[RMDB]
RNA sequence: GGGAACGACUCGAGUAGAGUCGAAAAACAUGCUGGCCAACCCAACCCCACGAUCCUCCAUCGGCAUGAUCAUGAUGUAUUCUCAAAUAUCAGGCCAGUAAAUCACCAUGCUCGUGCUGGUAAAGGCAACUUAUGCCCAAGUUCGCUUGGGCAUAAAUACUCGUCUAUUGUUCGCAAUAGACGAGUAAAAAGAAACAACAACAACAAC
Reactivity to DMS in 0.01 (KOAc 150mM, MgCl2 10mM, bicine 150mM(pH8.5), 24C), signal-to-noise 2, nucleotides 027 to 156: a100c050a050u000g010c000u000g040g000c010c030a200a190c070c010c050a130a100c040c010c010c020a040c160g010a120u000c000c010u000c020c040a050u000c040g030g000c010a020u000g020a030u000c020a050u010g020a020u000g010u000a110u000u000c070u010c050a090a060a170u010a070u000c110a110g020g000c030c010a030g010u000a010a030a090u000c020a020c000c010a010u000g020c110u010c030g060u000g000c000u000g000g020u000a020a040a010g000g030c090a060a110c050u000u000a040u000g010c010c000c020a010a040g040u000u000c300g030c000u000u000g010g010g020c000a000u010a000a010a140
Reactivity to 2A3 in 0.01 (KOAc 150mM, MgCl2 10mM, bicine 150mM(pH8.5), 24C), signal-to-noise 4, nucleotides 027 to 156: a000c010a010u030g000c000u000g000g010c000c000a040a040c050c020c080a050a060c040c010c000c010a060c070g060a120u050c000c010u020c050c030a040u020c000g000g020c010a010u010g020a010u000c020a000u020g020a030u030g020u080a040u090u050c050u030c030a080a090a030u270a140u170c090a040g010g000c000c000a000g000u010a010a040a030u130c030a020c080c000a000u010g000c000u000c010g000u000g000c010u010g010g000u040a100a140a020g010g000c030a040a050c060u010u010a000u010g000c000c000c000a020a000g020u040u070c100g010c130u000u010g050g000g000c000a000u000a000a000a000
Chemical mapping of a 207-nucleotide RNA with DMS and 2A3.